[RMDB]
RNA sequence: GGGAACGACUCGAGUAGAGUCGAAAAGGAUGCUCGUUCGCGAGCAUCCACUGAGAUAGCCACUAUAAAGAUUAAGUCUUCCUACUCGAGACAGGAUGUCUUUGCUCCUGGCCUUCGGGCCAGGAAAAUCGUCUUAAUCAUUCGUGAUUAAGACGAUAAAAGAAACAACAACAACAAC
Reactivity to 2A3 in 0.01 (KOAc 150mM, MgCl2 10mM, bicine 150mM(pH8.5), 24C), signal-to-noise 3, nucleotides 027 to 126: g000g010a000u000g000c010u000c010g030u050u080c270g030c000g110a000g000c010a000u020c000c010a010c010u050g010a040g000a030u060a030g100c070c040a090c080u090a070u120a300a150a050g090a090u070u170a120a040g090u030c000u030u010c010c000u020a010c010u000c000g050a030g060a100c050a030g170g030a100u130g040u100c010u090u040u080g060c010u010c010c000u000g000g000c000c000u050u040c210g060g010g000c000c000a000g000g000a000a010a010
Reactivity to DMS in 0.01 (KOAc 150mM, MgCl2 10mM, bicine 150mM(pH8.5), 24C), signal-to-noise 4, nucleotides 027 to 126: g000g010a010u000g010c000u000c010g030u000u010c200g040c010g020a000g000c000a010u000c010c010a030c120u010g000a190g000a040u000a070g010c100c100a050c130u000a090u000a070a060a070g000a060u000u010a110a100g010u000c010u000u000c060c020u000a010c020u000c020g010a010g010a110c070a110g000g000a100u010g010u000c010u000u000u010g010c170u000c000c010u000g000g010c000c000u000u010c180g040g000g000c000c000a000g000g000a000a020a060

Structure probing data (2A3 and DMS) for a 177-nucleotide construct. For DMS, 4,722 sequencing reads were counted. 2A3 adducts were read by reverse transcription with SuperScript II with manganese. Reactivities are given for positions 27 through 126.